Chemical mapping of a 207-nucleotide RNA with 2A3. Values are in units of 0.01, from 0 to 300, in steps of 10. For 2A3, 333 sequencing reads were counted. Reactivities are given for positions 27 through 156. Source: RMDB library OK3TST, as collected in RNAgym.
RNA sequence: GGGAACGACUCGAGUAGAGUCGAAAAAUACUUCAGUACUUAAGGGAGCUCUGGGUGAAACCUACAGAAUUCACUAUAACUUAAUUUAUCUCUCUUGUGUAUUUUAUUUUCUGGACAUUGCUUCUCUGAGUUAAUCUGGCUAUUAAGAAUACUGAGGUGUGAUAAUGGUGUUCGCACCAUUAUCACAAAAAGAAACAACAACAACAAC
Reactivity to 2A3 in 0.01 (KOAc 150mM, MgCl2 10mM, bicine 150mM(pH8.5), 24C), signal-to-noise 1, nucleotides 027 to 156: a000u070a000c000u000u050c020a010g000u050a000c020u020u070a050a040g000g030g080a040g010c120u070c190u050g110g000g000u050g060a050a060a030c000c040u040a020c050a070g180a180a070u190u040c040a000c000u140a210u050a300a000c000u080u140a060a160u120u230u080a300u140c020u020c000u060c000u190u120g060u020g000u090a010u000u150u000u110a160u010u150u040u090c000u070g000g010a020c070a050u170u040g020c000u000u090c110u040c090u050g070a060g010u000u020a000a000u090c000u140g000g000c000u020a070u080u120a020a050g070a190a110u070a040c000u010g050a000g130g030